Chemical mapping of a 170-nucleotide RNA with 2A3 and DMS. The RNA was probed in 150 mM KOAc, 10 mM MgCl2 and 150 mM bicine (pH 8.5) at 24 C. The DMS profile rests on 40,102 reads.
RNA sequence: GGGAACGACUCGAGUAGAGUCGAAAAGAAGAAGGAAAGGAGGACACGGACGACAAACCGUAGGUACUCUUGCCCUUUAUUGUUGGGUGCACCCUGGGACCCAGUAAUACCCGGGGGGAGGCGGGGUUAAGUACUGUCUUCGGACAGUACAAAAGAAACAACAACAACAAC
Reactivity to 2A3 in 0.01 (KOAc 150mM, MgCl2 10mM, bicine 150mM(pH8.5), 24C), signal-to-noise 6, nucleotides 027 to 129: g060a030a000g020a010a010g020g010a040a010a030g010g000a000g000g020a010c000a000c020g010g060a050c070g040a050c110a070a080a010c020c000g020u030a130g010g070u170a060c020u010c000u040u060g010c010c000c000u000u090u030a150u060u090g080u020u040g000g000g000u050g030c030a110c030c010c010u010g030g020g010a000c000c010c000a010g030u060a030a040u070a140c020c000c000g020g010g010g000g010g000a030g000g020c070g010g000g010g000u040u090a080a000
Reactivity to DMS in 0.01 (KOAc 150mM, MgCl2 10mM, bicine 150mM(pH8.5), 24C), signal-to-noise 5, nucleotides 027 to 129: g020a040a060g010a080a050g000g000a050a170a050g000g000a000g030g020a080c100a030c070g050g020a000c110g050a130c270a090a110a070c000c000g020u020a050g030g030u030a110c050u020c030u000u000g020c290c000c010u000u000u000a020u010u000g030u000u000g000g000g000u040g020c080a010c060c040c030u000g000g000g000a070c050c020c030a100g020u050a030a040u000a050c040c010c010g000g000g010g010g000g010a000g020g040c080g000g000g000g000u040u050a030a110